[RMDB]
Conditions: 150 mM KOAc, 10 mM MgCl2 and 150 mM bicine (pH 8.5), 24 C.
This 207-nucleotide RNA was probed chemically with 2A3 and DMS.
For DMS, 1,610 sequencing reads were counted.
The data come from the RNA Mapping Database (RMDB), library OK3TST.
DMS adducts were read by reverse transcription with MarathonRT.
For 2A3, 640 sequencing reads were counted.

RNA sequence: GGGAACGACUCGAGUAGAGUCGAAAACGAUGUGUUUCCUCCAUAAUAGUUUCAGGCCCAGCACUCACAAGCUAACUGAAGCAUAGCACAGCUAGAGGUUGCAGAAACCAUGUAUUACUGACAUAUUAGCAAAACAGACCUUGGCUAAGGACAGUUAAUAUUUUAGGGACUUCGGUCCCUAAAAUAUAAAAGAAACAACAACAACAAC
Reactivity to 2A3 in 0.01 (KOAc 150mM, MgCl2 10mM, bicine 150mM(pH8.5), 24C), signal-to-noise 1, nucleotides 027 to 156: c040g090a130u120g060u040g000u090u030u050c010c000u080c050c010a090u120a120a050u060a280g000u010u040u040c050a040g020g000c000c090c000a000g000c040a040c030u070c010a100c040a200a060g010c030u120a080a050c060u040g050a020a000g050c010a000u030a010g060c010a000c040a180g010c030u010a000g000a020g120g000u030u050g030c050a030g110a020a030a000c020c020a010u120g060u040a040u010u120a060c000u010g110a040c030a020u110a040u120u080a070g000c040a000a000a070a110c000a000g030a030c000c020u170u130g020g000c010u020a000a010g030g040a010c000a000g020u120u090a070
Reactivity to DMS in 0.01 (KOAc 150mM, MgCl2 10mM, bicine 150mM(pH8.5), 24C), signal-to-noise 1, nucleotides 027 to 156: c090g020a130u010g070u000g030u000u010u010c020c020u010c020c000a110u000a110a120u010a110g020u000u000u000c010a150g030g040c050c060c070a090g030c010a130c090u000c070a120c050a070a130g050c030u000a070a100c040u000g000a030a150g010c040a170u000a090g000c070a160c070a050g030c080u000a070g000a130g020g010u010u010g020c020a050g010a080a070a020c020c010a040u000g010u000a100u000u000a280c020u020g040a040c060a060u000a190u000u000a000g020c030a030a070a050a110c070a150g020a020c080c070u000u000g020g060c020u010a050a020g000g000a080c060a100g010u010u020a060